[RMDB]
About this RNA: The record gives the reactivity of an RNA of 177 nucleotides to DMS and 2A3. The reactions ran in a buffer of 150 mM KOAc, 10 mM MgCl2 and 150 mM bicine (pH 8.5), at 24 C.

RNA sequence: GGGAACGACUCGAGUAGAGUCGAAAAGGGACUAAAACUAGGGAGAACCUAAACCUCCUGACUAAGAAUGCUCCCGCAUUCCUGAGGAAGGAAUGAAAGGCAACAAGUCGUGAAGAGUAUCCCAAUACGUCUUACCCUGGUUCGCCAGGGUAAGACGAAAAGAAACAACAACAACAAC
Reactivity to DMS in 0.01 (KOAc 150mM, MgCl2 10mM, bicine 150mM(pH8.5), 24C), signal-to-noise 1, nucleotides 027 to 126: g000g020g010a120c140u000a040a090a090a120c100u030a090g010g000g010a030g000a190a230c120c050u020a110a060a080c130c030u030c030c000u000g000a090c130u000a090a070g010a110a120u000g000c010u020c040c050c090g000c000a010u000u010c000c010u010g000a130g010g000a140a020g010g000a010a030u000g000a050a060a030g010g000c030a030a090c100a130a020g000u000c000g010u000g000a050a030g000a140g000u000a120u010c000c010c000a040a160u000a130
Reactivity to 2A3 in 0.01 (KOAc 150mM, MgCl2 10mM, bicine 150mM(pH8.5), 24C), signal-to-noise 1, nucleotides 027 to 126: g020g000g030a010c010u060a110a000a080a030c040u060a080g000g050g020a050g040a060a080c010c020u090a100a070a100c000c000u000c010c000u000g010a040c000u120a120a070g040a300a000u050g010c070u040c000c040c000g020c000a000u000u000c010c000u000g010a090g210g240a040a000g050g060a000a010u030g040a000a010a020g060g050c010a050a060c040a180a000g020u080c070g110u150g090a030a040g030a020g040u060a010u060c030c000c010a020a040u110a040